[RMDB]
RNA sequence: GGGAACGACUCGAGUAGAGUCGAAAAUGAGAAUGGUAAUUGGGUAUUAGUUCAAGACGAGGAUGCCGAUGAUGGGGUGCGGUUCUAAUGAGAGAGGUCAUUAAGCAUCAGAACAUUUACAACAUCAUUAGUCCCGCGUUCUAUGACUUGCACGACCACGGAGAGUGCAUUUCGAUGCACUCUCCGUAAAAGAAACAACAACAACAAC
Reactivity to 2A3 in 0.01 (KOAc 150mM, MgCl2 10mM, bicine 150mM(pH8.5), 24C), signal-to-noise 1, nucleotides 027 to 156: u180g000a040g100a070a120u120g040g040u070a080a090u070u000g020g000g000u130a110u300u100a130g050u020u100c090a090a000g000a090c060g000a040g000g000a030u050g070c080c070g110a080u100g000a010u030g000g020g000g040u030g010c000g020g000u040u000c020u020a000a020u080g000a050g020a030g030a030g150g000u020c020a020u000u030a010a020g050c020a130u050c040a050g050a070a030c020a020u050u130u160a080c100a120a010c040a040u020c000a000u030u000a000g070u020c000c030c030g040c020g000u000u000c040u020a060u060g050a060c040u000u050g000c000a020c070g050a090c050c010